[RMDB]
RNA sequence: GGGAACGACUCGAGUAGAGUCGAAAAAUCAAAAUUGGUGAAGAACAGCGUAUCCUGCAUGUCAUUCCACAGGAGUUCACCAUAGAUUAUCAGGAAGGCAUCAAGAAUCCGCUGGGUUUAUCCGGGAUAAAAUGGGUGGUUUCGACCACCCAUUUUAAAAAGAAACAACAACAACAAC
Reactivity to DMS in 0.01 (KOAc 150mM, MgCl2 10mM, bicine 150mM(pH8.5), 24C), signal-to-noise 1, nucleotides 027 to 126: a100u000c050a160a020a080a100u010u000g010g000u000g000a090a070g000a150a170c040a020g000c020g020u000a130u000c000c000u000g000c270a020u000g020u000c050a140u010u000c020c030a110c260a100g000g010a050g010u000u000c090a020c120c090a100u000a090g010a060u000u000a140u020c030a090g010g000a070a010g000g010c030a000u000c060a120a060g010a060a040u000c040c050g010c010u000g010g000g000u000u010u000a070u030c030c020g030g010g010a250

This 177-nucleotide RNA was probed chemically with DMS. Conditions: 150 mM KOAc, 10 mM MgCl2 and 150 mM bicine (pH 8.5), 24 C. For DMS the reverse transcriptase was MarathonRT.